[RMDB]
RNA sequence: GGGAACGACUCGAGUAGAGUCGAAAAACGAGCAGUAUCGCUUGAAGAUUAACUCUGCGCUGAACCAAGAGGACCCAAGGACAGCUUGGGAGAUGCUUCAAGGUAUCAAGGCUGAACUAGAUAAGGUCCAACCUGAUGAGCAGAUGACACCACAACGGCUAAGUGUUACAUUCGUGUAACACUUAGCAAAAGAAACAACAACAACAAC
Reactivity to DMS in 0.01 (KOAc 150mM, MgCl2 10mM, bicine 150mM(pH8.5), 24C), signal-to-noise 2, nucleotides 027 to 156: a050c020g010a030g020c020a300g030u000a200u010c050g040c000u000u000g000a090a130g010a290u010u000a050a120c100u020c000u000g050c080g020c020u020g000a180a100c030c020a060a140g020a300g000g000a130c000c010c010a120a080g030g000a290c160a130g000c020u030u010g000g000g000a080g000a080u000g070c000u000u000c100a100a210g010g020u000a070u000c060a110a050g060g010c000u000g020a020a080c000u000a090g010a140u010a100a080g000g000u000c000c000a000a090c010c010u020g000a080u000g000a090g020c020a020g000a120u000g010a140c030a090c020c000a040c120a170a170c170g030
Reactivity to 2A3 in 0.01 (KOAc 150mM, MgCl2 10mM, bicine 150mM(pH8.5), 24C), signal-to-noise 5, nucleotides 027 to 156: a000c020g020a000g000c000a020g070u300a080u270c110g000c030u030u020g040a090a030g020a070u120u060a060a040c060u000c010u010g000c020g030c100u220g010a050a020c020c010a050a020g030a050g020g020a020c030c000c000a020a020g050g000a120c090a060g080c000u010u030g050g060g010a140g020a010u120g030c000u060u110c060a090a030g080g000u010a050u040c020a070a000g020g000c000u000g010a020a050c000u010a030g100a220u130a140a060g020g010u030c020c000a010a020c020c020u030g030a060u080g030a020g000c000a000g050a130u050g060a030c010a040c070c060a050c040a110a050c070g060